[RMDB]
RNA sequence: GGGAACGACUCGAGUAGAGUCGAAAAGUACGAUCGAUCCGUCGUACGUACUCCAUGUCACUAGUACUACGUGAGCGAUCCACGUACCAUGACUAGGCAUCUAGCGCUGUACUAGGCUAGCAUGAGCCUAUGUGCGUUUCUUCGGAAACGCACAUAGAAAAGAAACAACAACAACAAC
Reactivity to 2A3 in 0.01 (KOAc 150mM, MgCl2 10mM, bicine 150mM(pH8.5), 24C), signal-to-noise 4, nucleotides 027 to 126: g000u010a000c020g010a080u040c040g040a070u050c080c080g020u020c000g000u010a040c000g000u020a020c020u010c050c030a130u130g040u070c050a010c120u030a020g020u020a030c000u010a000c020g060u060g070a080g080c070g050a050u050c010c030a030c040g030u030a050c040c040a070u110g060a140c030u040a040g010g060c040a190u040c080u040a020g010c090g010c210u120g030u050a050c020u010a020g030g030c010u030a000g040c000a040u040g070a040g020c000
Reactivity to DMS in 0.01 (KOAc 150mM, MgCl2 10mM, bicine 150mM(pH8.5), 24C), signal-to-noise 4, nucleotides 027 to 126: g020u000a000c010g000a100u000c080g000a060u010c060c110g010u000c020g010u000a060c060g020u010a050c050u000c080c090a090u000g010u010c120a070c060u000a030g020u000a030c020u000a010c000g020u000g010a100g020c150g000a030u000c030c140a060c060g000u000a030c120c110a060u000g000a070c030u000a040g010g010c060a130u050c020u010a090g000c030g010c150u010g000u000a070c030u000a020g010g000c040u000a070g000c060a110u000g000a090g010c080